[RMDB]
Chemical mapping of a 177-nucleotide RNA with 2A3 and DMS.
RNA sequence: GGGAACGACUCGAGUAGAGUCGAAAAGAUAUGGAUCGAUACAGAGCUCCGUGGUUCGGAAACGAACCACUGAGCGACGAAGUAUCGAGUCCUAAGUCAAAGGCACUAUUGUUCGCAAUAGUGCCAAGUAUGUAAAUUUCUUCGGAAAUUUACAUACAAAAGAAACAACAACAACAAC
Reactivity to 2A3 in 0.01 (KOAc 150mM, MgCl2 10mM, bicine 150mM(pH8.5), 24C), signal-to-noise 2, nucleotides 027 to 126: g010a000u020a020u070g020g010a000u010c000g000a000u000a000c010a050g030a010g040c000u010c000c020g020u000g010g000u000u000c000g010g000a020a030a020c010g000a000a000c000c010a000c000u000g000a000g020c040g000a020c010g000a020a020g010u010a000u010c010g010a010g040u040c000c000u010a020a010g030u020c040a070a090a280g000g000c000a000c000u010a000u020u010g050u090u110c300g000c160a000a000u010a010g000u000g010c000c000a000a010
Reactivity to DMS in 0.01 (KOAc 150mM, MgCl2 10mM, bicine 150mM(pH8.5), 24C), signal-to-noise 4, nucleotides 027 to 126: g000a020u000a090u010g000g010a250u000c000g000a020u000a000c000a030g000a050g020c000u000c000c260g020u000g000g000u000u000c000g020g010a030a020a040c000g010a010a000c000c000a000c010u000g010a010g030c000g000a070c220g000a060a120g000u000a000u000c000g000a020g010u000c000c000u000a010a110g000u000c010a090a140a140g000g000c010a000c000u000a000u000u000g010u000u010c220g020c000a010a000u000a010g010u000g000c010c000a010a010
2A3 adducts were read by reverse transcription with SuperScript II with manganese. For DMS the reverse transcriptase was MarathonRT. The 2A3 profile rests on 8,882 reads. The DMS profile rests on 6,419 reads.